Background:
Structure probing data (2A3 and DMS) for a 207-nucleotide construct. For DMS, 2,114 sequencing reads were counted. For 2A3, 2,433 sequencing reads were counted. As a SHAPE reagent, 2A3 marks flexible, mostly unpaired nucleotides at the ribose 2'-OH. 2A3 adducts were read by reverse transcription with SuperScript II with manganese.

RNA sequence: GGGAACGACUCGAGUAGAGUCGAAAAAGUAUCUCGAUAAUUGAUCUGUAGAAUCUGUCAAGCAAAACCCCAAAACCUUACACUGAGAGCAUUUAGCCUGAUUACUCUUUAAAUCAAAUCAGGCAAUUCAAGGUCGCAGUCUUCGGACUGCGACCAACACGUAUAAAAUGUUCGCAUUUUAUACGUGAAAAGAAACAACAACAACAAC
Reactivity to 2A3 in 0.01 (KOAc 150mM, MgCl2 10mM, bicine 150mM(pH8.5), 24C), signal-to-noise 4, nucleotides 027 to 156: a000g070u050a090u000c060u020c040g050a050u110a190a090u180u110g020a030u030c070u120g100u140a080g070a100a030u010c020u040g030u050c050a050a000g040c020a080a040a090a220c020c000c000c050a020a090a040a120c030c050u100u120a040c080a040c130u120g070a020g000a000g020c010a010u010u020u040a030g000c000c010u010g000a000u000u010a000c000u010c010u120u300u070a050a020a010u190c110a010a000a000u000c000a000g020g000c000a000a010u040u020c010a030a070g000g020u010c010g010c000a000g000u010c000u000u060c090g050g010a000c000u000g000c000g040a000c000c000a000a000
Reactivity to DMS in 0.01 (KOAc 150mM, MgCl2 10mM, bicine 150mM(pH8.5), 24C), signal-to-noise 1, nucleotides 027 to 156: a090g010u000a020u000c010u000c000g040a110u010a080a140u000u000g000a060u000c070u020g040u000a090g010a060a020u010c040u000g000u000c020a000a100g020c090a110a070a100a190c030c010c020c070a060a060a070a120c070c030u000u000a020c000a080c100u020g030a040g020a020g010c000a300u000u010u000a130g000c010c020u010g000a040u010u000a020c010u000c010u010u000u010a020a050a030u000c090a050a080a060u020c000a020g070g050c000a020a000u000u000c070a050a150g030g040u000c010g000c000a010g040u000c000u010u010c300g070g000a020c000u000g000c000g060a010c000c000a020a040
Description
Reactivities are given for positions 27 through 156.